An RNA of 207 nucleotides, treated with 2A3 and DMS and read out base by base.
Conditions: 150 mM KOAc, 10 mM MgCl2 and 150 mM bicine (pH 8.5), 24 C.
RNA sequence: GGGAACGACUCGAGUAGAGUCGAAAACGAAGGAAAGCUUGACCAGCUAAUCUUCUGCAACGCCAUUACGAGGACUGCCCUUAGAGGCUCAAGGCGAUAGGUCACCCCGCCGGUCGGUCAGCUGCUUAUACCCGUGCACGGUUCGCCGUGCACGGAACCAAAUCUAGUGGUUCGCCACUAGAUUUGGAAAAGAAACAACAACAACAAC
Reactivity to 2A3 in 0.01 (KOAc 150mM, MgCl2 10mM, bicine 150mM(pH8.5), 24C), signal-to-noise 3, nucleotides 027 to 156: c000g010a020a030g050g020a300a050a000g000c010u060u060g010a020c020c010a000g010c010u020a050a030u050c040u050u020c020u060g040c090a100a030c040g010c010c010a070u110u140a060c090g060a070g140g020a090c080u060g000c010c000c040u050u120a100g020a140g110g020c010u010c060a040a000g030g010c010g060a070u090a050g000g030u040c040a100c020c000c000c000g040c010c010g090g000u100c030g020g020u040c030a020g020c080u100g020c020u160u010a070u090a230c000c010c000g000u000g000c000a000c000g030g070u040u060c290g000c050c000g010u000g000c000a000c010g000g000a000a000
Reactivity to DMS in 0.01 (KOAc 150mM, MgCl2 10mM, bicine 150mM(pH8.5), 24C), signal-to-noise 1, nucleotides 027 to 156: c050g030a010a100g030g000a020a170a060g000c030u010u000g020a100c050c030a300g000c020u010a030a170u010c050u000u000c010u010g010c050a080a110c090g000c020c030a260u010u010a130c050g000a130g000g000a130c010u000g010c000c000c020u000u060a120g000a110g020g010c010u000c030a060a050g040g050c020g020a160u010a050g010g010u000c060a200c040c100c010c000g040c060c050g000g020u000c020g000g000u000c060a070g040c010u000g010c030u020u000a230u000a200c100c030c010g000u000g000c010a010c000g030g040u020u010c300g030c000c010g000u010g000c000a000c000g000g070a010a050
Source information:
The 2A3 profile rests on 1,431 reads. For 2A3 the reverse transcriptase was SuperScript II with manganese. Source: RMDB library M2RFPK, as collected in RNAgym. For DMS, 1,617 sequencing reads were counted.